[RMDB]
RNA sequence: GGGAACGACUCGAGUAGAGUCGAAAAAUUUAUGGGUGUUUUGAUGCCCUUUUAUGAGUUUUCUCUGACUUUGACAGCUGGGACAGGGAAAUAUCCUUGAACUGGAGUCUUUCCUUUGACGGCUAAGUCCUAAGCCAACAUUCGUGUUGGCUUAGGAAAAAGAAACAACAACAACAAC
Reactivity to DMS in 0.01 (KOAc 150mM, MgCl2 10mM, bicine 150mM(pH8.5), 24C), signal-to-noise 1, nucleotides 027 to 126: a000u000u000u000a030u000g000g000g040u000g000u000u000u020u060g010a050u010g020c030c010c000u000u000u020u020a100u000g000a070g010u000u010u000u010c100u000c000u030g010a040c060u000u000u000g000a120c120a120g000c080u030g040g010g030a300c150a010g020g010g010a010a020a060u010a140u000c010c000u000u000g010a110a130c290u000g000g010a010g010u000c170u000u000u000c000c010u000u000u000g000a180c130g000g000c050u010a100a080g000